Source: RMDB library TTRDES, as collected in RNAgym. Structure probing data (2A3 and DMS) for a 177-nucleotide construct. DMS adducts were read by reverse transcription with MarathonRT. 2A3 adducts were read by reverse transcription with SuperScript II with manganese.
RNA sequence: GGGAACGACUCGAGUAGAGUCGAAAAGAUAUGGAAUGUUGGUUCUUGGACCGUACGGUGUCGGAAACGACAUUACGCUAGAACCUGCAUUCCUAAGUCAAAGGAGGUCUGGUUCGCCAGACCUCCACCCAGUAUGCUUGUUCGCAAGCAUACUGGGAAAAGAAACAACAACAACAAC
Reactivity to 2A3 in 0.01 (KOAc 150mM, MgCl2 10mM, bicine 150mM(pH8.5), 24C), signal-to-noise 2, nucleotides 027 to 126: g010a030u030a020u100g000g020a000a010u010g000u030u020g010g020u000u000c000u150u300g130g050a130c050c040g000u010a030c210g110g000u010g010u030c000g000g000a040a050a030c000g000a000c000a010u020u030a000c000g010c040u050a030g010a010a000c010c000u000g000c000a010u000u030c000c000u010a040a010g010u000c030a010a070a250g000g010a000g000g000u000c000u010g020g080u080u200c300g090c060c000a000g000a000c000c000u000c000c000a010
Reactivity to DMS in 0.01 (KOAc 150mM, MgCl2 10mM, bicine 150mM(pH8.5), 24C), signal-to-noise 3, nucleotides 027 to 126: g000a040u000a150u010g000g000a020a040u040g000u000u010g000g010u000u000c020u000u010g040g010a080c300c010g010u020a040c300g030g030u010g000u000c010g010g000a020a010a070c010g000a020c000a030u000u010a020c020g010c010u000a010g000a000a000c000c020u000g020c000a040u000u000c010c000u000a000a040g000u000c030a080a140a150g020g010a040g000g000u000c010u010g010g010u000u010c260g020c000c000a020g000a010c000c010u000c000c000a000